[RMDB]
RNA sequence: GGGAACGACUCGAGUAGAGUCGAAAAGAAAGAAAGAAAGAAAUAUGACAGAAUGACGGAUUCGAUCGUUGUGGUCGGCGGGCCACCACGUCAUUCCUUCGCACUGUCUCCGGGCAGACCGCCAUAAAAAAGCGGAUCUACUUCGGUAGAUCCGCAACAUUCACUGAACGUUCGCGUUCAGUGAAUGAAAAGAAACAACAACAACAAC
Reactivity to 2A3 in 0.01 (KOAc 150mM, MgCl2 10mM, bicine 150mM(pH8.5), 24C), signal-to-noise 4, nucleotides 027 to 156: g050a000a060a010g070a050a060a010g030a050a110a010g090a040a130a030u260a090u130g010a020c030a030g060a120a110u070g010a030c040g020g010a020u060u080c130g030a090u210c060g030u020u040g000u000g010g000u010c050g030g100c080g080g000g000c010c000a000c000c000a000c000g010u020c000a000u010u010c000c000u010u030c020g000c010a050c050u010g000u000c000u010c050c020g030g000g010c010a020g020a130c010c030g030c030c020a070u300a020a110a010a040a020a000g000c000g010g000a000u000c000u000a010c000u000u020c160g050g000u010a000g000a000u000c000c000g000c000a000a000